RNA sequence: GGGAACGACUCGAGUAGAGUCGAAAAGCAUGUUCUUCGGAACAUGCAAAAAGCGUACUACGAGAACUACAGCAGUGUCUACCCACCUUAGUCCCAAAUAGGACUAAGAGGACACCUGCUGCUCGUAUCGCAAAAAACUUAAGGUUCGCCUUAAGAACCCGUCAUUAACGUUCGCGUUAAUGACGGGAAAAGAAACAACAACAACAAC
Reactivity to 2A3 in 0.01 (KOAc 150mM, MgCl2 10mM, bicine 150mM(pH8.5), 24C), signal-to-noise 2, nucleotides 027 to 156: g000c000a000u000g020u000u010c010u050u060c290g020g000a000a000c010a000u010g000c020a000a000a000a080a000g030c060g020u110a060c030u000a000c100g020a020g030a090a080c190u150a070c260a010g000c000a000g000u000g010u060c030u100a180c040c020c020a060c010c000u000u000a000g000u030c010c070c000a060a260a140u300a100g000g000a000c000u000a000a000g000a010g000g000a000c000a000c000c100u030g000c000u010g010c000u010c000g000u000a010u170c030g000c010a000a000a110a110a080a000c000u000u000a010a000g000g020u020u110c290g150c030c000u000u010a010a000g010a020a070